[RMDB]
An RNA of 207 nucleotides, treated with 2A3 and DMS and read out base by base. For 2A3, 1,521 sequencing reads were counted. The reactions ran in a buffer of 150 mM KOAc, 10 mM MgCl2 and 150 mM bicine (pH 8.5), at 24 C.
RNA sequence: GGGAACGACUCGAGUAGAGUCGAAAAGUAUGUGCGGUGGUUUUAACGUUCCUAUCCUUCGCGACAAGACUCAUCACAUCGACGCGUCUUUUGCUGUUGGAUGCAAACACAACAUUCUCUUUGUUUUCCAAAGCAGAGAACAAAAAUUCUUGGGAGCAAUGCCAACCAUAUUCGUAUGGUUGGCAUUAAAAGAAACAACAACAACAAC
Reactivity to 2A3 in 0.01 (KOAc 150mM, MgCl2 10mM, bicine 150mM(pH8.5), 24C), signal-to-noise 3, nucleotides 027 to 156: g080u060a070u140g040u050g030c130g030g050u090g010g070u000u070u140u120a080a040c020g000u000u000c000c000u040a030u040c020c000u030u100c030g010c010g030a030c080a040a020g010a020c010u020c100a080u090c040a080c030a230u140c130g070a070c030g020c020g030u020c000u000u040u090u050g030c060u160g080u110u020g000g010a020u010g030c010a040a060a030c050a020c020a150a140c050a140u150u020c050u000c000u040u060u020g060u040u110u080u000c020c020a070a040a030g050c020a050g010a010g020a040a010c060a020a070a000a050a040u140u050c060u070u040g040g040g000a050g110c030
Reactivity to DMS in 0.01 (KOAc 150mM, MgCl2 10mM, bicine 150mM(pH8.5), 24C), signal-to-noise 2, nucleotides 027 to 156: g000u000a040u010g010u010g000c000g020g030u000g000g030u000u000u020u000a070a160c100g000u000u000c010c000u000a100u000c030c030u000u000c070g000c000g020a100c100a050a090g000a020c010u000c030a060u000c020a100c170a100u000c100g010a050c040g030c090g000u000c020u030u000u000u010g030c000u020g040u000u010g020g020a070u000g010c030a020a070a100c120a110c030a040a090c060a100u000u030c040u010c030u000u000u010g010u000u000u010u010c030c010a110a060a150g030c140a020g010a050g000a040a030c030a010a010a060a080a230u000u000c000u010u010g020g030g000a270g040c080